This 207-nucleotide RNA was probed chemically with DMS and 2A3. The data come from the RNA Mapping Database (RMDB), library M2RFPK. For DMS the reverse transcriptase was MarathonRT. The RNA was probed in 150 mM KOAc, 10 mM MgCl2 and 150 mM bicine (pH 8.5) at 24 C. For 2A3, 1,299 sequencing reads were counted.

RNA sequence: GGGAACGACUCGAGUAGAGUCGAAAAGCCUAAUAACCUGCGCUGAGCCCUUCUCCCCCAGCUUGCCUGUGUCCUAGGGAAUUGGAAGGUCAUCCUUCACAGGAUCGUGUGGAAGUCCUGCUCGGGGUCCAAACAUGGUAAUUCGUUACCAUGUUAACAUUAGCCUUGUUUUCGAACAAGGCUAAUGAAAAGAAACAACAACAACAAC
Reactivity to DMS in 0.01 (KOAc 150mM, MgCl2 10mM, bicine 150mM(pH8.5), 24C), signal-to-noise 2, nucleotides 027 to 156: g010c000c030u000a080a170u000a070a080c050c000u000g000c080g030c040u010g000a110g020c000c040c040u010u010c030u000c020c040c040c010c010a100g030c060u000u010g000c040c030u050g010u010g010u010c010c050u010a110g040g040g030a090a130u010u000g020g010a090a070g000g020u000c070a120u000c020c000u000u020c060a090c050a030g000g010a060u010c050g000u000g020u000g030g010a120a100g020u000c010c020u000g000c040u000c060g000g010g000g040u000c040c040a090a040a040c010a000u000g010g020u000a010a050u000u010c260g020u000u000a000c000c000a010u000g010u000u000a040a160
Reactivity to 2A3 in 0.01 (KOAc 150mM, MgCl2 10mM, bicine 150mM(pH8.5), 24C), signal-to-noise 2, nucleotides 027 to 156: g030c010c000u080a130a150u100a090a080c050c050u060g000c020g000c040u050g040a070g020c010c000c000u100u060c120u040c040c030c020c000c020a010g000c010u030u100g070c010c010u030g010u020g000u080c020c030u030a020g000g040g080a070a040u110u100g070g040a050a000g060g060u110c040a090u090c030c010u050u080c030a010c000a060g040g000a010u040c040g070u130g010u050g110g030a000a060g030u000c020c020u030g010c010u020c000g010g010g010g000u020c010c020a040a000a000c000a000u000g000g010u030a010a000u010u080c080g050u020u000a010c000c000a010u000g000u020u000a030a000